The record gives the reactivity of an RNA of 207 nucleotides to 2A3 and DMS. The RNA was probed in 150 mM KOAc, 10 mM MgCl2 and 150 mM bicine (pH 8.5) at 24 C. Source: RMDB library ARCHII, as collected in RNAgym.
RNA sequence: GGGAACGACUCGAGUAGAGUCGAAAAAUGUUUUGCCGCAGCAACUCUGCGCCGAAAAGCAGCCUGAAAGGGUGAUGUGGUGCCCUUGGACAAAAAUAUUAAAUGCUAGUCCGGCCUUCUCACAGGCUGGGCGACACACUCAAAUUGCGGGAAACCCCCAUACAUAUAGGUUCGCCUAUAUGUAUGGAAAAGAAACAACAACAACAAC
Reactivity to 2A3 in 0.01 (KOAc 150mM, MgCl2 10mM, bicine 150mM(pH8.5), 24C), signal-to-noise 4, nucleotides 027 to 156: a000u060g010u020u030u010u060g100c000c010g010c010a000g020c010a010a130c030u020c020u140g010c020g030c030c020g090a060a060a010a060g020c020a020g010c010c030u110g050a120a060a040g030g000g030u050g040a280u070g020u030g040g140u070g000c000c020c000u020u080g020g010a020c040a040a100a050a040a010u180a100u190u280a070a150a070u120g040c040u030a030g000u000c000c000g010g000c010c000u100u100c170u060c070a070c080a040g000g010c010u020g010g010g010c000g000a000c000a000c000a000c010u000c010a050a070a210u090u080g000c020g000g030g000a040a060a070c000c020c000
Reactivity to DMS in 0.01 (KOAc 150mM, MgCl2 10mM, bicine 150mM(pH8.5), 24C), signal-to-noise 2, nucleotides 027 to 156: a070u010g010u000u000u000u000g020c050c000g020c030a050g010c050a150a140c170u000c010u000g000c010g020c030c070g000a090a070a100a190g040c050a190g010c000c020u000g000a120a060a070g020g010g010u000g010a080u000g030u000g020g030u000g030c010c010c020u000u000g000g020a210c050a040a040a080a100a100u000a070u000u010a070a090a050u010g000c030u000a300g000u010c010c000g050g000c020c000u000u000c130u000c130a160c190a040g010g000c020u010g040g020g010c010g020a120c180a020c000a090c040u000c070a010a090a160u000u000g020c030g010g010g010a050a060a150c030c030c040